Source: RMDB library M2RFPK, as collected in RNAgym.
Structure probing data (2A3) for a 207-nucleotide construct.

RNA sequence: GGGAACGACUCGAGUAGAGUCGAAAAACGGUCAUAUACGUAUGACCGAAUGAGCAUAACAGGGCCACCCCAAAGCGUUCACAUUGUGGCCCCUAUCAGAUUCUGGUAAAUCUGCGAGUUCUGCUAAAUUAGGUAACUCUCUUCGGAGAGUUACCAAGCUUAGAAAGACGUUCGCGUCUUUCUAAGCAAAAGAAACAACAACAACAAC
Reactivity to 2A3 in 0.01 (KOAc 150mM, MgCl2 10mM, bicine 150mM(pH8.5), 24C), signal-to-noise 2, nucleotides 027 to 156: a010c000g000g000u010c010a000u000a000u050a080c220g080u050a000u010g000a000c000c000g010a000a060u030g010a000g000c060a050u020a140a010c020a080g010g010g000c010c000a030c010c020c000c050a020a150a040g120c070g110u150u120c040a040c010a280u040u090g000u020g000g000c000c010c000c010u130a060u120c010a000g020a090u090u020c020u230g120g000u100a030a030a030u020c010u010g040c070g080a060g010u030u030c060u040g070c020u040a050a160a190u210u140a090g000g000u000a000a000c000u000c000u000c010u050u020c080g000g000a000g000a000g010u000u000a000c000c000a000a000

The 2A3 profile rests on 844 reads.